Chemical mapping of a 207-nucleotide RNA with 2A3 and DMS. Values cover nucleotides 27 to 156. The data come from the RNA Mapping Database (RMDB), library OK3TST. Conditions: 150 mM KOAc, 10 mM MgCl2 and 150 mM bicine (pH 8.5), 24 C. DMS adducts were read by reverse transcription with MarathonRT.
[RMDB]
RNA sequence: GGGAACGACUCGAGUAGAGUCGAAAAUACCCUUCCAGUCUCCAGACUUCUCGAAACGUACCAUUCGAACAAUAGCGACGAACCUAUCUCGGCGCUGCGGUAUCAGCCUCUACGGAAACUACGAUUUCGCGCUGGUGGAAGGCGUGCUACCCUGGAAGGAACAUACUUGAUUCGUCAAGUAUGUUCCAAAAGAAACAACAACAACAAC
Reactivity to 2A3 in 0.01 (KOAc 150mM, MgCl2 10mM, bicine 150mM(pH8.5), 24C), signal-to-noise 8, nucleotides 027 to 156: u040a000c010c000c000u010u010c060c020a150g110u090c080u040c100c010a080g000a230c070u220u040c100u110c070g020a010a010a010c010g010u020a030c030c030a120u040u070c040g030a040a030c040a090a110u120a100g010c010g020a020c000g010a060a120c040c070u180a160u210c070u010c030g010g000c000g000c010u010g020c030g040g000u100a170u290c060a060g050c000c010u070c070u080a040c040g040g000a050a050a030c020u020a010c020g300a300u020u010u020c040g000c000g000c020u010g010g030u010g010g010a010a000g010g020c130g020u020g020c000u060a090c010c000c010u080g110g040a170a120
Reactivity to DMS in 0.01 (KOAc 150mM, MgCl2 10mM, bicine 150mM(pH8.5), 24C), signal-to-noise 3, nucleotides 027 to 156: u000a090c050c000c000u010u000c030c020a070g000u010c070u010c050c050a100g020a120c080u010u050c020u000c040g010a060a090a100c040g000u000a060c040c010a300u010u000c040g000a250a280c140a090a130u000a090g020c000g020a040c010g010a080a080c030c050u010a130u010c040u000c010g030g000c050g030c020u000g020c050g060g060u000a100u000c080a130g010c030c070u000c010u010a180c000g000g010a070a030a100c200u000a070c060g030a160u000u000u000c010g010c130g000c020u010g000g060u020g000g020a040a030g040g030c060g030u000g000c000u010a090c030c010c000u000g010g000a190a300